The record gives the reactivity of an RNA of 177 nucleotides to DMS and 2A3.
Values cover nucleotides 27 to 126.
It was measured as part of the RMDB library RFM100.
[RMDB]
RNA sequence: GGGAACGACUCGAGUAGAGUCGAAAAACGACCUUACUUGAACAGGAUCUGUUCUAUAGGCUCGUACCUCUGUUUCCUUGAUUUCUCAAGAGACAGGCCCUUAACCCUGGUUGAUGAACCAUGACCGGGGAAUCCCUAAUUUCGAUUAGGGAUUCCCAAAAGAAACAACAACAACAAC
Reactivity to DMS in 0.01 (KOAc 150mM, MgCl2 10mM, bicine 150mM(pH8.5), 24C), signal-to-noise 1, nucleotides 027 to 126: a000c000g000a030c000c000u000u010a090c160u090u000g000a000a000c050a000g000g020a210u020c020u000g000u000u000c050u030a040u050a000g010g020c300u000c000g000u010a030c070c030u000c000u000g000u000u000u000c140c010u010u000g000a040u000u040u010c220u000c000a000a040g030a090g030a000c030a000g010g000c030c000c070u000u020a050a180c030c040c040u040g000g040u000u000g020a090u000g000a120a120c110c100a070u060g000a060c150c190g010
Reactivity to 2A3 in 0.01 (KOAc 150mM, MgCl2 10mM, bicine 150mM(pH8.5), 24C), signal-to-noise 5, nucleotides 027 to 126: a000c010g000a010c000c010u080u070a050c080u090u180g000a010a010c010a020g170g060a270u190c070u040g010u000u020c010u010a050u020a060g020g000c100u010c020g010u030a090c020c040u040c020u000g010u010u030u030c070c000u020u000g040a110u130u290u120c200u020c050a010a000g020a000g000a020c000a010g050g000c010c000c000u070u190a110a090c030c000c010u040g020g030u010u030g150a220u130g070a040a020c020c010a030u090g060a050c020c080g020